Chemical mapping of a 207-nucleotide RNA with DMS and 2A3.
The 2A3 profile rests on 1,337 reads.
RNA sequence: GGGAACGACUCGAGUAGAGUCGAAAAGAACAAGUGUCAUCGGUCCUUUUUUUGAGUUGUGAUACUGUUCGCCGAGCGGGCACAACUCCACUGAGUUACCACGAACUGUCAUGUCGUCUGUCAGGUGCAAUUGCCGAAGGAAGAUAAUCUGUAAUGAACUAGCUUGUUUGUUCGCAAACAAGCUAGUAAAAGAAACAACAACAACAAC
Reactivity to DMS in 0.01 (KOAc 150mM, MgCl2 10mM, bicine 150mM(pH8.5), 24C), signal-to-noise 1, nucleotides 027 to 156: g020a030a050c010a050a100g010u010g040u000c050a060u000c100g020g000u000c070c030u000u000u000u000u000u000u000g000a070g010u000u020g010u050g000a060u000a070c040u000g020u000u000c080g010c040c080g000a120g010c000g000g010g000c020a070c020a050a080c020u000c000c120a110c060u010g010a120g020u010u000a060c020c050a130c010g020a120a080c050u000g010u010c070a070u000g000u000c030g000u000c040u000g000u020c080a070g050g000u000g020c020a060a120u010u010g030c000c020g020a120a090g030g000a040a100g010a040u010a090a120u000c070u000g030u000a060a100u010g000a120
Reactivity to 2A3 in 0.01 (KOAc 150mM, MgCl2 10mM, bicine 150mM(pH8.5), 24C), signal-to-noise 3, nucleotides 027 to 156: g060a050a020c070a100a050g030u050g040u120c040a080u070c060g050g040u130c040c030u070u090u040u020u030u120u180g010a010g000u030u020g000u030g030a070u120a260c010u030g000u040u080c110g100c300c100g020a030g010c040g000g020g010c000a000c000a020a000c010u010c010c000a060c030u030g010a010g100u100u090a020c000c020a040c030g080a110a040c020u020g050u080c020a090u130g030u050c020g020u020c010u040g110u080c020a050g000g000u010g050c020a050a090u050u090g040c030c000g030a030a020g010g040a000a030g030a070u120a110a070u090c050u140g070u090a150a130u160g030a010